[RMDB]
RNA sequence: GGGAACGACUCGAGUAGAGUCGAAAAUACCGCGUCUUCGGACGCGGUAAGAUCCCGUCGGAAAACCUGAGAGACGGAGAAGAAGAGACUCAAGCUACGCAAUGACUGCCGGAUUCGUCCGGCAGAAUCAACUGGCUUUAUUCGUAAAGCCAGUUGAAAAAGAAACAACAACAACAAC
Reactivity to DMS in 0.01 (KOAc 150mM, MgCl2 10mM, bicine 150mM(pH8.5), 24C), signal-to-noise 2, nucleotides 027 to 126: u010a030c020c000g050c010g010u010c000u000u010c140g010g020a000c000g060c020g010g020u000a010a020g010a110u000c010c010c000g010u010c090g020g000a040a040a070a130c010c030u000g000a160g010a120g000a070c100g020g000a080g010a070a050g010a090a080g000a100g010a050c060u010c090a050a120g000c070u000a030c170g000c120a100a090u000g000a170c020u000g020c000c000g000g010a030u010u030c200g030u000c000c010g020g000c000a000g000a040a110